[RMDB]
RNA sequence: GGGAACGACUCGAGUAGAGUCGAAAAGGGUCUACAUGGGCAGCCAUGUCUGGGGGCAGCCAUGUCUGGGGACACCUGGGCAGUCACAGCCAGGGUUGUCUGGACAGUCACAGCUGGGGACGCCUGGGGUCCUCACUAUUUUCGAAUAGUGAGGACCAAAAGAAACAACAACAACAAC
Reactivity to DMS in 0.01 (KOAc 150mM, MgCl2 10mM, bicine 150mM(pH8.5), 24C), signal-to-noise 3, nucleotides 027 to 126: g000g000g000u000c050u000a080c060a050u000g010g010g030c120a090g000c030c030a060u010g020u010c100u000g030g000g010g000g020c010a050g010c030c040a070u000g010u000c080u000g000g010g010g020a040c080a060c030c010u000g020g010g010c020a060g020u000c100a090c120a070g000c010c030a170g000g000g010u010u010g010u000c070u020g010g010a100c030a040g000u000c040a050c090a190g010c030u000g000g000g000g000a030c050g010c030c010u000g010g000
Reactivity to 2A3 in 0.01 (KOAc 150mM, MgCl2 10mM, bicine 150mM(pH8.5), 24C), signal-to-noise 1, nucleotides 027 to 126: g030g000g000u010c040u060a040c040a060u090g010g100g060c060a060g070c040c040a070u060g070u060c060u070g030g030g000g020g030c030a040g000c010c000a040u070g010u000c020u010g050g000g000g020a010c030a070c090c000u030g020g040g000c030a020g030u080c030a020c040a060g010c000c010a000g040g020g000u070u050g050u050c050u040g000g140a030c020a020g010u040c040a010c020a100g000c030u020g000g050g030g060a020c000g050c030c010u070g000g020
Structure probing data (DMS and 2A3) for a 177-nucleotide construct. Conditions: 150 mM KOAc, 10 mM MgCl2 and 150 mM bicine (pH 8.5), 24 C. 2A3 adducts were read by reverse transcription with SuperScript II with manganese.